Description
Structure probing data (2A3 and DMS) for a 207-nucleotide construct.
RNA sequence: GGGAACGACUCGAGUAGAGUCGAAAAAGCGAACUUAUUGAAUCAUACUUUGAGAACACCACCAUACUCCAGAGUGUGGCUUCAGCUUAUGCUGCAUUGCCUAGCUGGAUUGCACUUGAAAAAGCUCGCGCUGAUCUUGAAGAGGCUAAGAAAAAUGGUCCUCUUACAUUUUCGAAUGUAAGAGGACAAAAGAAACAACAACAACAAC
Reactivity to 2A3 in 0.01 (KOAc 150mM, MgCl2 10mM, bicine 150mM(pH8.5), 24C), signal-to-noise 6, nucleotides 027 to 156: a000g030c010g030a030a030c030u090u090a070u090u300g050a070a040u080c040a030u060a150c050u080u090u140g070a080g020a090a020c030a020c090c020a020c040c010a070u070a160c050u030c040c020a020g010a030g090u050g020u020g030g010c030u030u020c010a000g000c000u150u120a070u300g010c010u030g020c040a100u080u150g020c000c020u020a030g000c010u010g000g010a010u020u070g000c000a020c020u030u050g060a110a020a020a000a000g030c020u020c030g030c010g000c030u030g010a050u020c020u040u080g020a040a030g010a020g060g000c040u060a070a040g100a060a100a020a010a030u140g050
Reactivity to DMS in 0.01 (KOAc 150mM, MgCl2 10mM, bicine 150mM(pH8.5), 24C), signal-to-noise 2, nucleotides 027 to 156: a060g010c020g010a070a040c020u000u010a150u000u010g020a100a130u000c040a080u000a060c030u000u000u000g010a130g010a130a130c020a050c050c060a090c050c020a110u030a050c050u000c030c020a150g010a080g010u000g010u000g000g010c100u000u010c030a040g000c000u000u000a070u010g010c020u000g000c090a070u010u000g020c020c000u000a110g000c010u010g000g000a100u010u010g070c010a040c030u020u020g020a070a100a130a080a050g010c020u000c050g000c050g030c020u010g000a100u010c010u010u000g020a070a100g000a130g010g010c030u000a030a090g000a030a040a040a080a120u010g000